[RMDB]
RNA sequence: GGGAACGACUCGAGUAGAGUCGAAAAGAUAUGGAAACUCUGCCAAGUGAUGACCUCGGAAACGAGCAAGCUUGUGCAGAGGUUUCCUAAGUCAAAAGGUGUGUUGCUCUUCGGAGCAACACACCAAGUAAAUGGGAAGGUUCGCCUUCCCAUUUACAAAAGAAACAACAACAACAAC
Reactivity to 2A3 in 0.01 (KOAc 150mM, MgCl2 10mM, bicine 150mM(pH8.5), 24C), signal-to-noise 1, nucleotides 027 to 126: g030a020u060a000u120g010g000a000a000a000c010u010c000u010g030c000c010a010a010g020u030g060a300u160g010a090c010c050u010c000g040g020a120a110a020c010g010a000g000c020a090a100g010c000u010u100g040u160g000c000a000g020a010g000g000u020u000u020c010c000u020a030a050g090u020c010a000a040a090a230g000g030u050g000u020g000u020u010g000c000u020c010u070u260c300g080g000a000g000c000a000a000c000a010c000a000c020c000a000a000
Reactivity to DMS in 0.01 (KOAc 150mM, MgCl2 10mM, bicine 150mM(pH8.5), 24C), signal-to-noise 3, nucleotides 027 to 126: g000a060u010a300u000g000g000a010a010a030c000u000c000u000g020c000c000a020a010g020u000g010a100u010g000a130c300c000u000c010g000g000a080a110a170c000g010a020g000c020a080a150g000c010u000u000g000u020g020c000a020g000a010g000g000u000u000u000c000c000u000a050a090g000u020c030a070a080a160a060g000g030u000g020u000g000u000u000g000c000u000c010u000u000c250g010g000a000g020c000a000a010c000a000c010a000c000c010a000a070

This 177-nucleotide RNA was probed chemically with 2A3 and DMS. For DMS the reverse transcriptase was MarathonRT. 2A3 adducts were read by reverse transcription with SuperScript II with manganese. Reactivities are given for positions 27 through 126. The DMS profile rests on 3,279 reads. The RNA was probed in 150 mM KOAc, 10 mM MgCl2 and 150 mM bicine (pH 8.5) at 24 C. The 2A3 profile rests on 2,391 reads.